[RMDB]
Structure probing data (DMS and 2A3) for a 177-nucleotide construct.

RNA sequence: GGGAACGACUCGAGUAGAGUCGAAAAUGAAACAGAAAAGUGAUAUGCAAAGAAGAUGGAGAUUCAAUUGUUUAUUGUUACGAAAAAAACACUUUUGUGUUUCUCGUGAAUCCUUCGGCUAUCCAUAGAAUGAAAAAUUGUUCGCAAUUUUUCAUUCAAAAGAAACAACAACAACAAC
Reactivity to DMS in 0.01 (KOAc 150mM, MgCl2 10mM, bicine 150mM(pH8.5), 24C), signal-to-noise 3, nucleotides 027 to 126: u010g010a060a110a090c040a070g000a060a070a060a050g020u010g010a070u010a020u010g020c020a050a060a180g010a070a060g000a060u010g000g010a090g020a110u000u010c040a040a100u010u010g020u000u010u000a060u020u000g010u000u000a080c100g000a000a000a070a090a050a040a070c020a000c050u000u000u000u010g010u000g010u000u000u000c050u000c090g010u000g020a040a060u000c030c010u000u000c020g020g000c070u000a030u000c020c030a120u000a100
Reactivity to 2A3 in 0.01 (KOAc 150mM, MgCl2 10mM, bicine 150mM(pH8.5), 24C), signal-to-noise 2, nucleotides 027 to 126: u120g020a020a010a000c060a020g120a060a070a020a010g060u100g030a030u020a030u230g000c020a150a160a110g050a080a030g050a100u100g090g040a080g010a070u070u050c020a010a070u050u040g150u140u240u040a050u050u080g040u070u090a060c050g030a000a000a000a000a000a080a080c030a000c000u000u070u070u150g150u000g000u020u000u020c030u020c020g040u020g050a040a020u030c020c000u000u040c020g020g000c030u050a010u030c000c000a010u030a110
The 2A3 profile rests on 1,489 reads. 2A3 adducts were read by reverse transcription with SuperScript II with manganese. The data come from the RNA Mapping Database (RMDB), library RFMREP. DMS adducts were read by reverse transcription with MarathonRT. The reactions ran in a buffer of 150 mM KOAc, 10 mM MgCl2 and 150 mM bicine (pH 8.5), at 24 C. For DMS, 2,050 sequencing reads were counted.